About this RNA:
The record gives the reactivity of an RNA of 207 nucleotides to 2A3. Values cover nucleotides 27 to 156. For 2A3, 1,984 sequencing reads were counted. The reactions ran in a buffer of 150 mM KOAc, 10 mM MgCl2 and 150 mM bicine (pH 8.5), at 24 C.
[RMDB]
RNA sequence: GGGAACGACUCGAGUAGAGUCGAAAAAGGCACUUCGCAAUGUGUGCUCAAACAUUGCUUAUUCAAACACGCUUCACAAUGUGCGACAAAGAAACAUUGUUAUAAGAGGUAAUGUUUUAACAUUGGCAAAACCGAGUUAGCUUCGGCUAACUCGGAACCCUCAUCUCUCGUUCGCGAGAGAUGAGGGAAAAGAAACAACAACAACAAC
Reactivity to 2A3 in 0.01 (KOAc 150mM, MgCl2 10mM, bicine 150mM(pH8.5), 24C), signal-to-noise 3, nucleotides 027 to 156: a010g130g020c000a000c030u020u020c020g010c010a000a010u000g000u000g000u010g020c120u100c220a050a040a000c000a000u000u000g000c020u040u110a200u150u170c190a050a130a080c090a010c070g010c010u000u020c010a000c000a020a000u010g010u010g030c030g110a070c150a060a190a020g060a040a040a000c000a000u000u020g010u110u080a170u060a090a060g020a010g020g010u060a000a040u010g020u030u070u050u030a060a040c040a030u030u060g090g010c050a030a090a050a010c000c000g000a000g000u000u000a000g000c010u040u030c250g060g000c000u000a010a000c000u000c000g000g000a000a000